The record gives the reactivity of an RNA of 177 nucleotides to DMS and 2A3. Conditions: 150 mM KOAc, 10 mM MgCl2 and 150 mM bicine (pH 8.5), 24 C. The data come from the RNA Mapping Database (RMDB), library OK2TRN.

RNA sequence: GGGAACGACUCGAGUAGAGUCGAAAAGGCCUGCCGUUGCGCCUCGCCGCCUGCGGGGGGAGCCCUAGAGCCUGCGACGACGGCCCUCCGCCGACAGGGGGCACCGCGGGGAUAGAGAGGGCGGAGAGUUGAGUUACUCUUUCGAGAGUAACUCAACAAAAGAAACAACAACAACAAC
Reactivity to DMS in 0.01 (KOAc 150mM, MgCl2 10mM, bicine 150mM(pH8.5), 24C), signal-to-noise 3, nucleotides 027 to 126: g000g000c010c020u010g040c060c040g000u010u010g030c140g020c060c030u000c100g010c010c110g010c030c020u010g040c020g020g020g000g010g000g000a160g000c010c010c030u010a220g010a170g010c030c000u000g000c000g000a130c100g010a090c300g000g020c040c010c020u010c010c020g010c080c090g000a080c090a110g010g000g010g010g010c010a050c080c050g000c030g000g000g000g000a150u010a090g000a160g000a100g000g010g010c020g020g000a110g000a160
Reactivity to 2A3 in 0.01 (KOAc 150mM, MgCl2 10mM, bicine 150mM(pH8.5), 24C), signal-to-noise 1, nucleotides 027 to 126: g060g060c020c020u010g050c010c040g040u090u070g090c010g050c040c010u020c020g080c040c020g070c040c040u020g000c050g010g000g000g000g010g030a050g010c010c010c040u120a080g020a030g140c010c020u050g000c040g030a080c020g020a000c030g020g020c000c000c020u050c000c000g140c040c030g070a030c040a020g000g040g030g030g000c000a030c050c010g000c010g060g000g000g040a020u200a030g130a010g020a010g010g000g000c050g040g040a090g010a010
The 2A3 profile rests on 1,512 reads. DMS adducts were read by reverse transcription with MarathonRT.